[RMDB]
RNA sequence: GGGAACGACUCGAGUAGAGUCGAAAAGGGGAAAACAUAAGUUGGGAAAAUAAGAAUGUAAAAGGGAAGUGAAGAAGUGAAGAGAGAAGUUUCUCGAGAGGUGGUAUCUCAAAGCUUUUCAAAAUGAAAAUUAUCAGGUUAUCUAAUAUUUGGAAUAGUAAUCCUUUUAGUUCGCUAAAAGGAUUACAAAAGAAACAACAACAACAAC
Reactivity to 2A3 in 0.01 (KOAc 150mM, MgCl2 10mM, bicine 150mM(pH8.5), 24C), signal-to-noise 1, nucleotides 027 to 156: g000g000g010g000a020a050a000a020c070a000u170a100a050g010u080u010g000g000g050a000a100a000a000u090a070a020g060a030a000u070g010u150a030a030a030a020g000g000g000a010a010g030u030g020a060a000g050a020a000g030u060g070a160a000g030a010g000a000g040a070a000g030u020u090u020c070u000c010g110a120g000a000g000g040u050g000g040u060a000u070c010u000c020a080a130a040g060c000u150u120u030u060c080a080a190a100a080u090g050a110a070a000a000u120u050a070u220c010a010g010g050u070u040a030u110c000u110a080a150u080a150u270u260u270g010g030a000a000u300a060